Structure probing data (DMS and 2A3) for a 207-nucleotide construct. For 2A3 the reverse transcriptase was SuperScript II with manganese. The 2A3 profile rests on 2,544 reads. The data come from the RNA Mapping Database (RMDB), library OK3TST. 2A3 is a SHAPE reagent: it acylates the 2'-hydroxyl of flexible nucleotides of all four kinds. Conditions: 150 mM KOAc, 10 mM MgCl2 and 150 mM bicine (pH 8.5), 24 C.
RNA sequence: GGGAACGACUCGAGUAGAGUCGAAAACUAUAAGGUGAAUGGCAUUUUUUGGCUACUUGGCGUCAGUCAGUUUAGAACCCACAUAGCAAGUGGCUUCAAGAGGUCAUUGUUUAGCUCAAGUGGAGUGAGACACGACUGCUGUCAUAUUUUAAUGCAAUAAUAGCGUGAUAUUCGUAUCACGCUAUUAAAAAGAAACAACAACAACAAC
Reactivity to DMS in 0.01 (KOAc 150mM, MgCl2 10mM, bicine 150mM(pH8.5), 24C), signal-to-noise 4, nucleotides 027 to 156: c030u000a120u010a090a080g010g050u000g010a090a080u000g000g020c030a020u000u000u020u020u000u020g010g030c000u010a050c080u010u000g030g030c040g020u000c040a080g030u010c040a180g030u000u010u000a070g010a120a080c040c010c020a040c040a150u000a160g000c020a080a070g030u000g020g020c000u000u000c070a160a150g020a150g010g020u000c010a030u000u000g010u000u000u000a100g020c060u010c300a080a180g000u000g010g000a120g030u000g010a170g010a070c020a100c040g010a070c040u000g020c030u010g010u010c010a120u000a070u000u000u000u000a030a140u010g000c090a090a170
Reactivity to 2A3 in 0.01 (KOAc 150mM, MgCl2 10mM, bicine 150mM(pH8.5), 24C), signal-to-noise 5, nucleotides 027 to 156: c050u070a050u090a300a070g140g000u120g090a090a070u060g090g000c030a040u030u010u030u100u160u240g070g010c050u090a070c100u050u010g020g010c010g020u030c000a000g010u000c000a010g010u060u040u110a090g010a040a020c020c030c010a020c030a030u100a000g000c010a050a000g020u000g010g020c000u070u050c100a160a140g080a050g170g000u000c000a000u010u040g030u100u140u120a020g010c010u030c080a120a080g000u010g010g040a190g020u030g030a050g030a010c040a010c110g020a010c030u020g000c020u000g020u000c010a000u020a100u090u130u040u120a070a050u080g020c020a010a050